[RMDB]
RNA sequence: GGGAACGACUCGAGUAGAGUCGAAAAGGUAGCAGAGAAGAGACUAGGCUUCAGACUAGAUAGUAUCACACUACAGGUACAUAGUAGAGACAUACAUAGAUGUGUAUGACACAUCAGAGCUGCCAUGGGACUCGUAGCUAUUCGUAGCUACGAGUCCAAAAGAAACAACAACAACAAC
Reactivity to DMS in 0.01 (KOAc 150mM, MgCl2 10mM, bicine 150mM(pH8.5), 24C), signal-to-noise 2, nucleotides 027 to 126: g000g030u000a000g010c030a140g010a190g030a100a090g010a170g000a130c060u000a030g000g000c030u000u000c100a120g010a050c140u000a080g000a080u010a040g020u000a060u000c020a100c170a150c060u050a010c060a120g000g050u000a080c110a060u000a060g020u000a010g000a100g020a100c090a060u000a080c100a060u010a030g050a010u030g020u010g000u000a110u000g050a090c030a000c080a020u000c000a100g020a080g040c040u000g010c040c040a060u030g010
Reactivity to 2A3 in 0.01 (KOAc 150mM, MgCl2 10mM, bicine 150mM(pH8.5), 24C), signal-to-noise 1, nucleotides 027 to 126: g020g030u000a010g000c030a000g020a020g020a300a000g070a000g050a020c010u020a020g060g040c000u100u070c110a040g000a030c000u040a010g050a110u080a040g020u040a030u060c010a030c010a010c230u150a010c050a040g000g040u010a030c010a130u100a000g050u030a020g010a010g030a080c010a040u080a010c020a000u060a130g070a070u100g020u010g020u020a140u300g020a050c020a010c000a000u020c040a010g070a010g080c000u010g000c010c010a030u100g120
The record gives the reactivity of an RNA of 177 nucleotides to DMS and 2A3.
Reactivities are given for positions 27 through 126.
The RNA was probed in 150 mM KOAc, 10 mM MgCl2 and 150 mM bicine (pH 8.5) at 24 C.